RNA sequence: GGGAACGACUCGAGUAGAGUCGAAAAGAUAUGGAUCUGCGAAUGGCAACAGCAUAUCAUUCGGAAACGAAUGUAUGACAUGCCACGCAGAUCCUAAGUCAAAGUGCUCAAGUUCGCUUGAGCACAAGAUGACCUUUCUCUUCGGAGAAAGGUCAUCAAAAGAAACAACAACAACAAC
Reactivity to DMS in 0.01 (KOAc 150mM, MgCl2 10mM, bicine 150mM(pH8.5), 24C), signal-to-noise 1, nucleotides 027 to 126: g000a020u000a030u030g000g000a010u010c000u000g000c000g060a110a240u010g050g030c010a080a050c250a180g040c000a020u000a000u070c020a020u000u000c000g020g020a010a000a030c000g000a010a010u000g000u010a000u000g000a000c020a300u020g000c030c000a060c010g000c010a000g010a010u000c000c010u000a000a050g010u000c000a120a100a130g010u020g000c020u010c030a010a020g000u000u020c260g040c020u010u010g010a010g000c000a000c000a040a010
Reactivity to 2A3 in 0.01 (KOAc 150mM, MgCl2 10mM, bicine 150mM(pH8.5), 24C), signal-to-noise 3, nucleotides 027 to 126: g000a020u020a010u050g020g000a010u010c010u050g000c050g150a300a300u160g060g010c250a300a050c110a300g040c000a030u000a000u260c040a020u020u000c000g010g000a010a000a020c010g000a000a000u020g000u000a030u000g030a030c090a220u300g000c010c000a000c000g000c030a010g000a000u010c010c000u000a000a020g030u020c020a000a000a300g000u000g000c010u000c020a010a020g010u130u130c300g060c170u020u020g010a010g000c000a000c000a000a000
Source: RMDB library TTRDES, as collected in RNAgym. Chemical mapping of a 177-nucleotide RNA with DMS and 2A3. The RNA was probed in 150 mM KOAc, 10 mM MgCl2 and 150 mM bicine (pH 8.5) at 24 C. As a SHAPE reagent, 2A3 marks flexible, mostly unpaired nucleotides at the ribose 2'-OH. For DMS the reverse transcriptase was MarathonRT. Values cover nucleotides 27 to 126.